[RMDB]
Structure probing data (2A3) for a 207-nucleotide construct.
The reactions ran in a buffer of 150 mM KOAc, 10 mM MgCl2 and 150 mM bicine (pH 8.5), at 24 C.
For 2A3 the reverse transcriptase was SuperScript II with manganese.
The data come from the RNA Mapping Database (RMDB), library OK3TST.
The 2A3 profile rests on 511 reads.

RNA sequence: GGGAACGACUCGAGUAGAGUCGAAAAACAACAGAUAGCUGGAACCAGCGUAGAAUUCUACGCAUAUCCAUAGCGAAUGGUACCUGUAAAGAAAAUAAGGGUGGAUGUACAAGUACCAACAGCCGCCUAUGCCAUGGUGAUGUCAAUCACAUAUGCAGCUAAUACGAGGCUUCGGCCUCGUAUUAGCAAAAGAAACAACAACAACAAC
Reactivity to 2A3 in 0.01 (KOAc 150mM, MgCl2 10mM, bicine 150mM(pH8.5), 24C), signal-to-noise 1, nucleotides 027 to 156: a000c030a000a070c030a020g080a090u130a020g010c040u000g020g000a050a010c040c070a030g000c000g010u000a000g100a150a250u290u110c000u000a000c000g040c050a040u130a010u020c010c020a020u100a010g010c030g040a040a000u020g020g030u000a030c000c000u040g020u000a160a120a000g070a000a050a110a000u150a040a060g050g050g010u050g030g010a050u040g030u030a040c030a040a080g010u020a070c050c020a000a050c050a010g000c010c000g070c000c000u090a110u140g050c030c030a050u030g050g000u000g040a040u030g120u160c020a000a130u010c000a000c040a040u040a030u170g020c000a010